Structure probing data (2A3) for a 177-nucleotide construct. The reactions ran in a buffer of 150 mM KOAc, 10 mM MgCl2 and 150 mM bicine (pH 8.5), at 24 C. Values are in units of 0.01, from 0 to 300, in steps of 10. 2A3 adducts were read by reverse transcription with SuperScript II with manganese. It was measured as part of the RMDB library OK1LIB.

[RMDB]
RNA sequence: GGGAACGACUCGAGUAGAGUCGAAAACACUGUUUCAUCACCAAUAACAGCGGAAAUCUUGGUUCCGCCAACAUCAUAACCAAGUAUAAAGCCCAUCGGCUUAUAAUGCAUAAAAUAAAUAUAAAUAACGAGCUAAUCAGUUCGCUGAUUAGCUCGUAAAAGAAACAACAACAACAAC
Reactivity to 2A3 in 0.01 (KOAc 150mM, MgCl2 10mM, bicine 150mM(pH8.5), 24C), signal-to-noise 1, nucleotides 027 to 126: c000a000c030u060g130u000u010u000c050a030u090c030a090c060c050a050a020u080a280a120c000a080g030c000g000g080a010a010a010u090c030u000u020g000g000u020u020c040c000g000c030c000a020a000c000a030u110c000a060u000a120a060c000c000a030a000g000u060a000u000a050a080a000g000c000c090c130a230u150c060g000g000c030u000u000a110u000a080a000u060g020c060a030u300a020a100a000a080u150a100a290a000u300a050u100a060a020a000u060a170